[RMDB]
RNA sequence: GGGAACGACUCGAGUAGAGUCGAAAAUAAGGGCACUUGGGAAGAUGUCAGCGUAUAGCUUCAGUUUAGUCCAAGCGAGGAGCUUUAUCGCCUGGUGCUGCCUUAAGAUCCUAGCCUGACAUGCCUGAGGUGCAAAUUACUUCGGUAAUUUGCACCUAAAAGAAACAACAACAACAAC
Reactivity to DMS in 0.01 (KOAc 150mM, MgCl2 10mM, bicine 150mM(pH8.5), 24C), signal-to-noise 2, nucleotides 027 to 126: u000a080a230g010g010g010c030a080c040u000u010g020g020g000a120a110g000a040u010g020u000c020a030g000c060g000u000a060u000a060g020c020u000u000c090a080g000u010u010u000a030g000u000c230c140a020a040g000c040g030a100g010g010a090g020c050u000u010u000a020u000c020g010c090c070u020g000g020u000g010c030u000g010c130c010u000u010a040a060g010a120u000c050c030u000a070g030c050c010u000g000a040c100a080u000g000c040c020u000g000